[RMDB]
Structure probing data (DMS and 2A3) for a 177-nucleotide construct. For DMS the reverse transcriptase was MarathonRT. For 2A3 the reverse transcriptase was SuperScript II with manganese.
RNA sequence: GGGAACGACUCGAGUAGAGUCGAAAAGAUUUAGUGACAGUCAUUGAAUCAGUGUGGCACGACUGUCGUGUUACAGAUGGCUUCUGUACCACAGGAGCCAGAGCUUAUUUGUGGUACAAGUAAGCGAGGUCAGCAAUGUAUUCGUACAUUGCUGACCAAAAGAAACAACAACAACAAC
Reactivity to DMS in 0.01 (KOAc 150mM, MgCl2 10mM, bicine 150mM(pH8.5), 24C), signal-to-noise 2, nucleotides 027 to 126: g000a040u000u000u000a030g040u000g000a240c200a120g000u000c010a010u000u000g000a040a030u000c040a180g010u000g030u000g000g000c000a010c010g010a300c250u010g010u000c010g000u000g000u000u000a020c030a080g000a140u010g020g020c000u000u000c010u000g020u000a090c060c050a240c010a000g040g000a000g020c000c050a010g010a080g000c000u020u000a030u000u010u000g030u000g010g000u030a300c000a010a020g000u000a020a020g020c000g000a080
Reactivity to 2A3 in 0.01 (KOAc 150mM, MgCl2 10mM, bicine 150mM(pH8.5), 24C), signal-to-noise 3, nucleotides 027 to 126: g020a000u040u050u050a040g020u050g050a060c120a110g220u120c010a060u010u030g020a010a030u020c040a040g120u000g010u020g100g020c050a000c040g090a050c170u210g070u280c020g000u020g010u000u050a050c050a060g140a100u110g050g000c000u000u000c000u020g030u040a180c010c020a050c020a040g000g000a010g000c010c000a000g020a000g000c000u000u050a050u100u190u050g050u050g140g060u160a030c010a040a010g100u070a010a010g000c030g020a040